An RNA of 177 nucleotides, treated with 2A3 and DMS and read out base by base. It was measured as part of the RMDB library OK2TST. The 2A3 profile rests on 1,131 reads. Reactivities are given for positions 27 through 126.
RNA sequence: GGGAACGACUCGAGUAGAGUCGAAAAGCUGAUCCAACGACUGCGACGGGAUCCGUUGCGUAUUUCUGGAUCUCUCUUGCGUUGCAGCGACAGGCUUGGUGUGUCCUGCUUGGCAGACACGGUGGAACGACUGAUUACCCUUCGGGGUAAUCAGUCGAAAAGAAACAACAACAACAAC
Reactivity to 2A3 in 0.01 (KOAc 150mM, MgCl2 10mM, bicine 150mM(pH8.5), 24C), signal-to-noise 2, nucleotides 027 to 126: g000c030u020g020a070u040c040c020a030a120c020g270a250c050u040g000c030g010a010c050g000g000g020a030u000c020c010g050u090u080g130c140g120u130a290u040u210u050c070u150g000g000a000u000c020u010c010u010c020u030u200g080c010g020u020u040g000c010a000g000c010g030a030c040a050g030g000c000u040u070g010g010u030g040u010g000u060c000c020u040g000c050u180u190g160g000c000a000g010a100c030a020c080g010g040u100g060g010a120a020
Reactivity to DMS in 0.01 (KOAc 150mM, MgCl2 10mM, bicine 150mM(pH8.5), 24C), signal-to-noise 2, nucleotides 027 to 126: g010c030u000g000a120u010c050c050a080a100c070g000a090c000u000g020c010g030a010c120g020g010g020a040u000c000c000g000u000u000g020c300g030u000a110u020u000u010c050u010g040g000a020u000c010u010c060u010c140u010u010g010c050g010u000u000g010c010a020g010c030g000a070c150a100g010g010c050u000u000g020g030u010g010u010g000u000c130c070u000g020c020u010u010g030g000c020a040g000a060c050a070c040g010g000u000g000g000a120a200